[RMDB]
RNA sequence: GGGAACGACUCGAGUAGAGUCGAAAAGAAAGAGAGUUAGACACGGUUGAUCUCACCGUUCGGGGGGGCUAUAGAGAUCACUGGAAGCACUACCGGACAACCGGAACAUUGCAGCAAUGCAGCCCAAAAAAUCCAAACAUCUUCGGAUGUUUGGAAAGAUGAAUAUAGAGUUCGCUCUAUAUUCAUCAAAAGAAACAACAACAACAAC
Reactivity to DMS in 0.01 (KOAc 150mM, MgCl2 10mM, bicine 150mM(pH8.5), 24C), signal-to-noise 2, nucleotides 027 to 156: g010a150a090a080g000a150g010a110g020u000u000a110g010a170c060a120c040g000g000u030u000g000a050u000c000u000c020a160c010c050g010u000u030c080g040g010g010g020g060g040g000c040u000a090u000a090g030a050g020a030u000c030a120c040u020g010g000a130a080g040c050a060c030u010a220c030c000g000g010a060c180a120a120c050c000g010g010a090a110c100a050u010u000g010c040a090g000c090a120a100u000g000c030a050g000c030c020c020a000a020a050a050a110a160u000c000c000a010a020a000c010a010u000c000u000u000c300g070g010a000u000g020u000u000u000g000g010a010a030a030
Reactivity to 2A3 in 0.01 (KOAc 150mM, MgCl2 10mM, bicine 150mM(pH8.5), 24C), signal-to-noise 3, nucleotides 027 to 156: g060a000a060a000g050a000g010a000g020u070u100a050g020a030c030a010c070g030g010u030u090g030a010u000c010u000c010a030c020c040g030u160u190c180g030g000g000g000g000g000g000c010u030a020u040a170g010a000g000a000u010c010a000c020u010g030g020a020a010g010c030a020c050u060a050c020c030g040g030a060c040a130a210c030c010g000g010a020a010c020a030u060u110g010c010a020g000c000a020a050u070g010c000a010g020c020c020c020a030a110a000a000a000a020u020c000c000a000a000a000c000a000u000c000u030u030c080g110g000a000u000g000u000u000u000g000g020a010a000a000